[RMDB]
RNA sequence: GGGAACGACUCGAGUAGAGUCGAAAAGCUAAAACACAGGGCUGCACAGCAUCCUUGCACCUGCGUAGCCGAUAGGUACGGGUGACCGUUUAUCCCGGGCUCGUGUGGGCCCGGGUAGGCACGGUCAUAGUGGUUCUACCUUCGGGUAGAACCACUAAAAAGAAACAACAACAACAAC
Reactivity to DMS in 0.01 (KOAc 150mM, MgCl2 10mM, bicine 150mM(pH8.5), 24C), signal-to-noise 1, nucleotides 027 to 126: g030c040u000a030a070a080a110c120a230c040a040g000g020g000c000u000g000c000a100c140a100g000c020a020u020c060c000u020u000g030c130a030c010c060u000g040c120g000u000a030g000c050c030g000a130u080a080g000g050u010a000c100g000g010g000u000g000a000c020c000g000u010u020u010a080u020c000c000c000g010g010g000c000u000c010g000u020g010u040g000g000g000c000c010c010g000g000g000u000a000g000g000c170a000c010g040g000u000c000a050
Reactivity to 2A3 in 0.01 (KOAc 150mM, MgCl2 10mM, bicine 150mM(pH8.5), 24C), signal-to-noise 2, nucleotides 027 to 126: g010c070u100a010a000a100a070c050a020c010a020g020g000g100c080u050g000c080a040c020a230g030c000a100u140c110c020u110u120g010c020a090c010c000u020g010c030g000u020a000g000c030c000g080a050u060a150g030g070u050a060c060g050g000g030u070g000a000c000c000g000u030u060u030a070u080c010c000c000g000g000g000c000u000c010g300u300g070u300g300g010g000c000c000c010g000g020g000u000a000g000g000c050a000c050g000g020u000c010a010